[RMDB]
RNA sequence: GGGAACGACUCGAGUAGAGUCGAAAACCCUAUCUUCGGAUAGGGAAAAAAGGGGUCAUUUAGAGGUUCAGACAUGCUCUGAAGCCUCCACGGAGCAACAGCUGAACUACCCACCUAAUGACGGAGGCACCCAAAAAACGCUCAUUCGUGAGCGUAACUAGAUGUGCAUGUUCGCAUGCACAUCUAGAAAAGAAACAACAACAACAAC
Reactivity to 2A3 in 0.01 (KOAc 150mM, MgCl2 10mM, bicine 150mM(pH8.5), 24C), signal-to-noise 2, nucleotides 027 to 156: c010c000c000u010a000u000c010u020u060c260g120g000a000u000a020g010g000g000a070a020a010a000a000a060g080g010g000g020u100c100a100u190u150u150a120g030a080g030g090u050u020c000a000g070a110c060a230u140g020c000u000c000u000g050a130a080g010c010c000u000c000c000a010c030g010g000a000g020c010a010a080c030a080g140c040u010g000a010a000c010u080a100c040c020c000a080c010c040u130a150a050u100g060a050c130g010g010a000g010g000c020a020c000c000c000a040a070a150a040a000a020c000g010c020u000c000a040u070u130c240g100u050g000a010g000c010g000u000a000a010